[RMDB]
RNA sequence: GGGAACGACUCGAGUAGAGUCGAAAAGGGGUCUGACAUGGCCUUGUACUACCCACCGCUAUGAACUACUCCUGAAGCCUCCACGGGAGCAUAGCGAGGUACAAGGUGUCAGACGGAGGCACCCAAACUAUGCGCGUAGUUCGCUACGCGCAUAGAAUCUCAAAGUAUCCUUCGGGAUACUUUGAGAAAAAGAAACAACAACAACAAC
Reactivity to DMS in 0.01 (KOAc 150mM, MgCl2 10mM, bicine 150mM(pH8.5), 24C), signal-to-noise 1, nucleotides 027 to 156: g040g000g000g030u000c040u010g030a080c050a220u040g000g050c000c030u000u010g000u000a090c050u000a000c000c010c040a300c040c050g030c010u000a030u000g010a250a230c100u000a250c050u000c000c000u000g000a170a210g000c030c020u010c040c000a300c030g000g030g000a000g100c040a040u000a000g000c020g050a150g040g030u030a050c020a050a030g030g060u000g040u000c030a060g010a060c090g000g010a040g000g010c050a090c010c040c010a100a030a290c000u000a000u000g000c020g070c030g030u000a000g010u000u000c170g020c030u010a020c000g000c010g030c000a000u000a040g000a030a190
Reactivity to 2A3 in 0.01 (KOAc 150mM, MgCl2 10mM, bicine 150mM(pH8.5), 24C), signal-to-noise 1, nucleotides 027 to 156: g080g030g030g020u000c020u020g020a020c020a040u240g300g040c010c000u000u020g010u020a030c040u050a050c050c070c060a070c050c040g020c000u000a010u040g040a140a120c050u140a070c000u260c000c010u010g050a070a010g020c000c000u000c000c010a070c030g000g010g000a010g030c000a000u000a000g010c000g010a000g010g010u000a000c000a000a000g020g010u060g030u060c000a010g030a000c000g000g000a000g000g000c000a040c000c010c000a010a030a050c000u000a000u000g010c000g000c000g000u010a000g010u010u070c180g000c100u000a010c010g020c000g000c000a000u000a000g000a000a010
An RNA of 207 nucleotides, treated with DMS and 2A3 and read out base by base. The reactions ran in a buffer of 150 mM KOAc, 10 mM MgCl2 and 150 mM bicine (pH 8.5), at 24 C. The data come from the RNA Mapping Database (RMDB), library RNAMAK.